[RMDB]
RNA sequence: GGGAACGACUCGAGUAGAGUCGAAAAGGCUCGAAGUUCGCUUCGAGCCAAAUAAUUUCAGCGGUAAUUCCUCCGCAAAUAUUACCGCUGAUGCGGAGGAAAAAACAACCGUGUUCGCACGGUUGAACGUUUAUUUGAUGUUCGCAUCAAAUAAACGAAAAGAAACAACAACAACAAC
Reactivity to 2A3 in 0.01 (KOAc 150mM, MgCl2 10mM, bicine 150mM(pH8.5), 24C), signal-to-noise 2, nucleotides 027 to 126: g010g010c010u010c000g000a020a000g010u040u100c170g060c090u010u000c000g020a010g000c000c000a000a000a010u010a000a030u030u100u060c020a010g020c010g030g040u080a050a110u080u040c010c010u020c010c010g000c020a000a040a010u150a030u070u100a080c010c000g020c060u030g060a030u040g000c020g000g000a000g000g000a040a020a000a010a000a020c000a000a000c000c000g010u010g020u010u050c190g010c040a000c000g000g000u000u000g020a040a000
Reactivity to DMS in 0.01 (KOAc 150mM, MgCl2 10mM, bicine 150mM(pH8.5), 24C), signal-to-noise 3, nucleotides 027 to 126: g010g020c000u000c000g010a010a020g010u000u000c200g000c020u000u000c000g000a010g000c000c000a000a010a030u010a060a110u000u000u010c040a040g000c030g020g000u010a100a100u010u000c020c010u000c020c040g030c030a040a070a070u010a080u000u010a100c030c010g000c030u000g020a070u000g010c040g020g010a030g010g020a010a050a040a060a070a100c000a000a010c000c000g040u000g010u000u010c160g010c000a010c000g000g010u000u000g000a050a110